Conditions: 150 mM KOAc, 10 mM MgCl2 and 150 mM bicine (pH 8.5), 24 C. This 207-nucleotide RNA was probed chemically with 2A3. For 2A3 the reverse transcriptase was SuperScript II with manganese. Reactivities are rounded to 0.1 and cut off at 0 and 3.
[RMDB]
RNA sequence: GGGAACGACUCGAGUAGAGUCGAAAAGCGGGACCAGGCAAACCUCAUAUGCGGCGCAUCUCAUCAUCCGUGUCUGCCGACUUUGAAGACAUGAAUUCGGUACUGGAAGAGUAUAAGAGUAAAUACAUCAAGAGAGAAAUAUCCGAGGUUGCAGCCGGAGAGAGGGUACAUUCGUGUACCCUCUCUCAAAAGAAACAACAACAACAAC
Reactivity to 2A3 in 0.01 (KOAc 150mM, MgCl2 10mM, bicine 150mM(pH8.5), 24C), signal-to-noise 1, nucleotides 027 to 156: g040c040g000g010g060a090c030c010a050g020g000c020a110a130a060c050c030u020c010a010u080a080u190g020c060g020g020c040g010c030a040u050c010u010c040a130u020c000a040u080c050c020g010u010g000u050c040u020g050c000c010g020a040c040u000u000u110g090a060a060g070a090c010a020u110g100a070a030u110u080c020g000g010u050a050c040u080g020g020a040a020g000a030g070u120a030u040a120a030g070a000g030u100a000a060a110u040a120c040a130u010c150a100a010g040a010g010a000g030a150a140a000u080a050u020c030c000g000a010g010g000u000u020g010c000a000g030c010c000g000